[RMDB]
RNA sequence: GGGAACGACUCGAGUAGAGUCGAAAAGAUAUGGAGGAUCAGUUGACAUGAAGAGUCUCGGAAACGAGACAUCUUCAACAGCAACGAUCCUCCUAAGUCAAAAGGUAUGCACUUCGGUGCAUACCAAGACUUCUAGGUACUUCGGUACCUAGAAGUCAAAAGAAACAACAACAACAAC
Reactivity to 2A3 in 0.01 (KOAc 150mM, MgCl2 10mM, bicine 150mM(pH8.5), 24C), signal-to-noise 2, nucleotides 027 to 126: g000a000u030a010u100g000g010a010g030g010a020u040c110a210g050u020u000g060a150c200a300u190g000a010a010g000a020g010u000c010u000c000g010g020a040a020a010c000g010a000g020a020c000a060u020c000u010u000c000a000a070c130a030g040c000a020a000c010g000a000u000c000c000u000c000c000u000a000a010g000u000c010a000a030a150a070g010g000u010a010u000g000c020a000c040u050u120c300g150g000u000g000c010a000u000a000c010c000a000a020
Reactivity to DMS in 0.01 (KOAc 150mM, MgCl2 10mM, bicine 150mM(pH8.5), 24C), signal-to-noise 2, nucleotides 027 to 126: g030a000u000a210u000g000g000a010g010g000a000u000c000a160g020u010u000g000a050c090a200u000g010a020a000g010a030g000u010c000u000c000g020g000a040a060a170c000g000a030g000a030c010a030u000c000u000u010c000a060a080c180a230g020c000a020a020c000g000a030u000c000c000u010c000c000u020a000a070g000u010c030a070a090a140a090g000g000u000a010u000g000c000a000c010u000u000c170g030g010u000g010c000a000u000a000c000c000a020a040